[RMDB]
RNA sequence: GGGAACGACUCGAGUAGAGUCGAAAAUACUAUUUUAAUCAGAAACACAAUACACCUUUUUUUUUUGACAUGGUCUCACUCUGUCACUUAGACUGGAGUGCAGUGGCACAACCAUGGUUCACUGCAGCGACUGGUACUAUUUCGAUAGUACCAGUCGAAAAGAAACAACAACAACAAC
Reactivity to DMS in 0.01 (KOAc 150mM, MgCl2 10mM, bicine 150mM(pH8.5), 24C), signal-to-noise 2, nucleotides 027 to 126: u050a070c070u000a060u010u020u050u040a020a100u040c080a110g020a060a080a050c070a050c080a030a050u020a110c070a060c010c000u000u000u000u010u000u000u000u070u010u000g000a110c010a020u000g000g030u000c030u020c040a040c030u000c000u000g000u010c020a140c210u050u010a050g000a010c100u010g000g000a000g010u000g000c050a020g000u030g010g020c080a090c070a020a080c120c040a030u010g050g010u000u000c000a020c040u000g030c020a060g000
Reactivity to 2A3 in 0.01 (KOAc 150mM, MgCl2 10mM, bicine 150mM(pH8.5), 24C), signal-to-noise 5, nucleotides 027 to 126: u110a010c020u030a170u100u150u110u170a110a140u080c040a020g140a140a180a010c060a020c040a130a130u210a130c020a130c060c070u040u020u020u020u010u010u000u020u050u070g040a030c000a040u020g020g020u010c000u000c050a030c010u010c030u020g050u080c020a040c140u070u030a060g040a080c040u070g070g050a060g010u000g000c010a010g020u050g080g040c070a010c020a070a060c000c030a020u060g000g040u050u070c050a040c070u040g020c040a060g040